Record summary: This 177-nucleotide RNA was probed chemically with 2A3 and DMS. For 2A3 the reverse transcriptase was SuperScript II with manganese. Source: RMDB library OK2TST, as collected in RNAgym. For 2A3, 964 sequencing reads were counted. The DMS profile rests on 1,322 reads. The RNA was probed in 150 mM KOAc, 10 mM MgCl2 and 150 mM bicine (pH 8.5) at 24 C.

RNA sequence: GGGAACGACUCGAGUAGAGUCGAAAACGAACUGAUUGGUGAAAUCAAGCGGCGUGGGCGGAUUGCCAUGGCCGAUAUUUCCACGCUGGCGGAGGCGCGCAACGCUCUUGCAGCGGGUGCGGAUAUAGCCAUUAAUCCACUUCGGUGGAUUAAUGGCAAAAGAAACAACAACAACAAC
Reactivity to 2A3 in 0.01 (KOAc 150mM, MgCl2 10mM, bicine 150mM(pH8.5), 24C), signal-to-noise 1, nucleotides 027 to 126: c000g020a060a030c060u100g030a080u100u140g030g090u120g030a060a050a020u040c060a050a030g000c000g030g000c000g000u030g050g050g040c030g040g020a050u010u180g070c000c020a070u100g160g000c010c000g010a000u050a080u030u050u040c010c000a020c000g030c010u020g080g030c030g070g050a080g040g050c030g000c020g010c060a130a060c000g040c020u000c080u040u210g000c070a000g000c050g000g020g040u000g000c010g010g000a020u060a030u050a110
Reactivity to DMS in 0.01 (KOAc 150mM, MgCl2 10mM, bicine 150mM(pH8.5), 24C), signal-to-noise 1, nucleotides 027 to 126: c070g000a090a160c100u000g000a070u000u010g010g020u010g010a110a030a050u010c040a060a190g000c020g000g000c000g050u020g020g050g030c070g000g010a090u010u000g030c020c040a060u000g010g020c030c030g000a050u000a030u000u010u010c000c020a030c020g010c050u000g020g030c060g000g000a110g000g000c050g020c030g010c060a050a070c010g000c000u010c030u000u020g020c080a030g020c000g000g010g030u000g000c030g000g010a150u000a110u010a130